This 177-nucleotide RNA was probed chemically with DMS and 2A3.
The data come from the RNA Mapping Database (RMDB), library OK1LIB.
Reactivities are given for positions 27 through 126.
Conditions: 150 mM KOAc, 10 mM MgCl2 and 150 mM bicine (pH 8.5), 24 C.
2A3 adducts were read by reverse transcription with SuperScript II with manganese.
For DMS, 1,557 sequencing reads were counted.
Values are in units of 0.01, from 0 to 300, in steps of 10.
RNA sequence: GGGAACGACUCGAGUAGAGUCGAAAAGCGCGACGAGGAAGACUUCCGAGCGGUCGCAACCUCGAGGUAGACGUCAGCCUAUCCCCAAGGCACGUCGGCCCGAGGGCAGGACCUGGGCUCAGCCCGGUGCCGCCCUGGAAUUCGUUCCAGGGCGGCAAAAAGAAACAACAACAACAAC
Reactivity to DMS in 0.01 (KOAc 150mM, MgCl2 10mM, bicine 150mM(pH8.5), 24C), signal-to-noise 1, nucleotides 027 to 126: g040c150g020c010g000a030c060g010a190g010g030a020a080g000a200c120u000u020c010c000g000a300g000c080g010g000u000c000g010c030a040a110c080c000u000c000g000a040g000g080u000a180g010a000c000g060u000c270a060g040c010c000u000a120u030c000c000c000c000a180a030g010g040c020a160c000g000u010c030g000g000c000c030c000g000a000g000g000g000c080a040g010g000a010c010c000u000g000g000g000c000u020c220a090g050c060c030c000g000g080
Reactivity to 2A3 in 0.01 (KOAc 150mM, MgCl2 10mM, bicine 150mM(pH8.5), 24C), signal-to-noise 2, nucleotides 027 to 126: g160c060g020c000g000a090c010g040a050g020g030a070a060g100a110c010u080u020c030c000g090a210g180c050g090g020u000c020g000c070a020a030c000c000u010c030g040a230g000g000u000a010g000a020c020g000u060c090a070g010c000c000u120a240u100c030c000c000c040a020a000g000g030c020a000c000g000u000c000g000g030c010c000c000g000a000g030g000g000c000a030g000g080a050c030c000u190g000g000g000c060u090c180a100g000c020c020c000g000g010